[RMDB]
RNA sequence: GGGAACGACUCGAGUAGAGUCGAAAAGAUAGAAAGAAAGAACUCUGUAAAGUGAGGGAUUGCCUGGACCAGGUCGGCGGGCCUGCUCCAGUUUCCUUCGCUCUGCUCAACGGGCAGACCGCCACAAAAAACGCGUGGCUGUUCGCAGCCACGCGAAGUACUUAGAAACGUUCGCGUUUCUAAGUACAAAAGAAACAACAACAACAAC
Reactivity to 2A3 in 0.01 (KOAc 150mM, MgCl2 10mM, bicine 150mM(pH8.5), 24C), signal-to-noise 2, nucleotides 027 to 156: g040a010u180a020g050a030a160a000g070a070a130a010g050a130a040c020u040c060u140g070u240a110a050a030g020u000g010a010g060g000g020a040u050u150g080c050c000u010g000g010a020c040c000a010g000g000u030c060g020g070c020g010g020g000c010c000u010g000c020u000c000c020a010g030u010u030u020c000c000u000u030c010g000c030u000c010u000g020c000u010c030a140a030c160g000g000g000c010a020g050a070c010c010g000c020c010a060c080a020a290a030a030a000a020c010g020c000g010u000g000g050c010u000g000u040u140c190g000c090a000g050c030c000a000c000g000c000g010a010a000